[RMDB]
RNA sequence: GGGAACGACUCGAGUAGAGUCGAAAAACAGAAGGGUGAAAGUUCAAGCAAGCUAGCCGGCAAAAAAGCAAACUUGACCACCAAGGAUAAAAGAGAUCUUAUCCAAGGAUGCAAAAGCUAAUCUCACAAAAGCUUCAUUCGUUCGCGAAUGAAGCAACUGCUCCUUACAGUUCGCUGUAAGGAGCAGAAAAGAAACAACAACAACAAC
Reactivity to 2A3 in 0.01 (KOAc 150mM, MgCl2 10mM, bicine 150mM(pH8.5), 24C), signal-to-noise 1, nucleotides 027 to 156: a000c040a060g050a100a040g040g040g000u090g060a220a100a020g070u150u050c090a050a020g020c000a010a110g000c020u030a010g040c070c040g110g010c030a130a140a050a000a000a010g010c000a050a030a060c000u020u040g020a020c000c040a010c040c000a060a070g020g000a010u040a080a090a080a000g160a000g010a040u000c040u020u020a020u050c030c030a000a030g030g000a050u090g000c040a000a200a060a000g010c000u030a020a050u030c030u030c060a040c030a050a160a010a010g030c010u010u010c000a000u000u000c000g030u000u070c230g000c000g130a000a010u010g000a000a000g000c010a000a000
An RNA of 207 nucleotides, treated with 2A3 and read out base by base. Conditions: 150 mM KOAc, 10 mM MgCl2 and 150 mM bicine (pH 8.5), 24 C. 2A3 adducts were read by reverse transcription with SuperScript II with manganese. It was measured as part of the RMDB library M2RFPK.